[RMDB]
RNA sequence: GGGAACGACUCGAGUAGAGUCGAAAAAGAGCGGGUUGCCGCAAGGCACGGGUCCGGCGUGGCGGCGCAGCGCCGCCACGAGCGCUUCCAGCUGCGCCGAGCGCGACUUGCGAUGCCGCGCCCACUCAACUAGACCAUCUUUCGAGAUGGUCUAGUUAAAAGAAACAACAACAACAAC
Reactivity to 2A3 in 0.01 (KOAc 150mM, MgCl2 10mM, bicine 150mM(pH8.5), 24C), signal-to-noise 1, nucleotides 027 to 126: a010g130a000g000c030g000g000g030u150u220g080c070c020g000c000a010a000g030g000c210a120c050g000g010g100u080c030c020g000g000c010g000u070g060g120c000g020g050c270g000c130a040g030c020g030c070c000g080c130c020a070c130g000a010g000c000g000c000u030u020c010c040a090g000c010u010g000c000g030c000c010g060a110g020c110g000c010g010a100c000u000u000g000c020g050a010u060g050c050c090g040c000g000c010c000c000a010c060u150c000
Structure probing data (2A3) for a 177-nucleotide construct. Conditions: 150 mM KOAc, 10 mM MgCl2 and 150 mM bicine (pH 8.5), 24 C.